[RMDB]
RNA sequence: GGGAACGACUCGAGUAGAGUCGAAAAAUGUAUGAGAAGAUGAAUGAAGAAAAGAAAGUUCCGGUGAUGUUGUAACGUUCAGGCGGUGAACAUAGUCUGGGAAAACGAGUUAAAGAAGCAAGGGACGAACUAUCUUGCAGUUCGCUGCAAGAUAGUUAAAAGAAACAACAACAACAAC
Reactivity to 2A3 in 0.01 (KOAc 150mM, MgCl2 10mM, bicine 150mM(pH8.5), 24C), signal-to-noise 3, nucleotides 027 to 126: a000u080g020u030a040u090g100a040g040a120a000g060a030u140g100a090a030u070g040a040a050g070a010a080a010a010g100a010a070a040g060u070u000c020c020g000g030u110g010a040u030g000u090u010g020u010a120a040c060g000u000u020c030a010g030g020c000g080g020u070g090a000a000c000a020u050a020g000u000c030u040g000g020g080a030a100a000a070c100g000a050g040u080u110a090a020a050g040a030a010g030c070a030a100g050g000g000a000c010g000
Reactivity to DMS in 0.01 (KOAc 150mM, MgCl2 10mM, bicine 150mM(pH8.5), 24C), signal-to-noise 5, nucleotides 027 to 126: a060u020g000u010a040u020g020a080g010a060a060g010a060u010g010a060a060u010g000a040a060g000a060a070a060a090g010a050a080a070g000u010u000c000c010g030g020u070g010a050u000g010u010u000g010u010a070a080c070g000u000u000c070a040g000g000c020g010g010u010g000a040a040c120a070u010a080g030u020c030u020g020g000g000a050a040a060a050c080g000a090g000u010u010a030a070a080g010a090a060g000c060a050a050g000g000g000a070c070g010
Notes:
An RNA of 177 nucleotides, treated with 2A3 and DMS and read out base by base. DMS (dimethyl sulfate) methylates the pairing face of unpaired adenines and cytosines. The RNA was probed in 150 mM KOAc, 10 mM MgCl2 and 150 mM bicine (pH 8.5) at 24 C. 2A3 is a SHAPE reagent: it acylates the 2'-hydroxyl of flexible nucleotides of all four kinds. DMS adducts were read by reverse transcription with MarathonRT.